An RNA of 177 nucleotides, treated with 2A3 and DMS and read out base by base. The data come from the RNA Mapping Database (RMDB), library OK1LIB. Values cover nucleotides 27 to 126. For DMS, 1,197 sequencing reads were counted.
RNA sequence: GGGAACGACUCGAGUAGAGUCGAAAAUAUUAGGGCAUAAAUGGAAGAAAAGGAGACUAUGUUGGUAGAAUGUAAAGGAAGGGACCCUCAUUCACAAACAAGGCAGGGACUUUUAUGUUACUACUGAAUACUGCUCGCUAUUCGUAGCGAGCAGUAUAAAAGAAACAACAACAACAAC
Reactivity to 2A3 in 0.01 (KOAc 150mM, MgCl2 10mM, bicine 150mM(pH8.5), 24C), signal-to-noise 2, nucleotides 027 to 126: u270a000u110u170a020g030g070g000c070a000u040a030a040a030u090g110g000a040a060g060a110a120a000a000g080g010a070g020a000c010u060a090u140g050u060u050g030g060u130a000g000a130a020u130g000u080a000a000a090g070g030a040a110g080g000g050a010c020c000c000u000c010a110u220u200c070a000c120a200a180a000c000a020a020g210g100c150a000g000g000g050a040c030u000u000u000u060a060u030g040u000u000a130c040u020a010c000u010g000a030
Reactivity to DMS in 0.01 (KOAc 150mM, MgCl2 10mM, bicine 150mM(pH8.5), 24C), signal-to-noise 1, nucleotides 027 to 126: u030a080u020u020a000g010g000g120c090a010u000a050a070a080u030g000g010a060a050g030a030a040a140a010g010g000a090g010a040c130u020a100u010g020u010u000g020g030u000a070g030a040a000u000g020u000a040a050a030g000g000a140a120g010g030g030a140c060c000c000u000c060a130u050u030c120a060c180a070a060a010c250a070a030g000g030c020a040g000g020g000a220c000u010u000u000u000a040u000g000u000u000a040c010u020a000c050u000g000a090